[RMDB]
RNA sequence: GGGAACGACUCGAGUAGAGUCGAAAACACUUGGAGUUCGCUCCAAGUGAAACCAUUGCCGAUUGGCAAUAAUACCGCAGGCGGUUAAGCGGAACAAAUAAGAAAGCGAAGACUUCGGUCUUCGCAAGAAUGAUUGUAUCUUCGGAUACAAUCAUUCAAAAGAAACAACAACAACAAC
Reactivity to DMS in 0.01 (KOAc 150mM, MgCl2 10mM, bicine 150mM(pH8.5), 24C), signal-to-noise 3, nucleotides 027 to 126: c000a010c000u010u000g000g010a010g010u000u000c210g010c000u000c000c000a000a010g000u010g000a060a090a100c010c010a050u000u000g000c000c000g010a210u000u020g010g020c000a000a010u000a120a140u000a120c010c010g030c020a100g010g020c050g010g000u000u010a080a060g000c010g000g000a210a120c250a040a080a090u010a090a100g010a070a100a150g000c000g000a010a010g010a010c010u000u020c160g020g010u000c000u000u000c000g020c000a010a030
Reactivity to 2A3 in 0.01 (KOAc 150mM, MgCl2 10mM, bicine 150mM(pH8.5), 24C), signal-to-noise 6, nucleotides 027 to 126: c010a000c000u000u000g000g010a000g010u070u090c120g130c080u000c000c000a000a000g000u000g000a020a010a000c000c010a020u000u020g000c010c060g300a300u190u300g000g000c000a000a000u080a030a020u070a030c000c010g000c030a040g160g050c070g100g000u130u120a070a010g000c010g000g030a040a050c060a050a110a060u280a120a100g140a180a070a000g010c010g000a000a010g000a000c000u020u080c240g040g000u000c000u010u000c000g000c010a000a000